[RMDB]
RNA sequence: GGGAACGACUCGAGUAGAGUCGAAAAGAUAUUUUCAUGGACUGGUGAUUGGAACACUAGUGCAUAGGAGGAAGCAAGACAGUGGCAGUUUUAGGCUCAUGCAUAGAAGCUUAUACCAAUGUUUUUAGACCAUAUUUGGUAGGAGAUAGGGAGCCAAGGCACUCCUAUGAUUCGUCAUAGGAGUGCCAAAAGAAACAACAACAACAAC
Reactivity to 2A3 in 0.01 (KOAc 150mM, MgCl2 10mM, bicine 150mM(pH8.5), 24C), signal-to-noise 1, nucleotides 027 to 156: g060a000u030a100u180u090u020u210c040a030u070g020g050a030c010u040g000g040u160g030a150u280u260g020g100a070a000c000a000c000u000a010g000u000g040c000a000u070a060g060g030a020g030g000a030a000g010c000a000a020g000a000c050a040g040u030g080g040c020a070g000u000u060u000u170a090g000g010c000u000c020a010u110g000c000a010u100a160g230a190a000g000c090u210u040a000u000a060c000c000a050a020u000g060u030u040u000u140u300a070g000a000c050c080a060u000a140u100u000u040g000g000u000a010g000g000a000g000a050u110a020g030g000g000a000g000c000c000a000a020
The data come from the RNA Mapping Database (RMDB), library OK3TST. An RNA of 207 nucleotides, treated with 2A3 and read out base by base.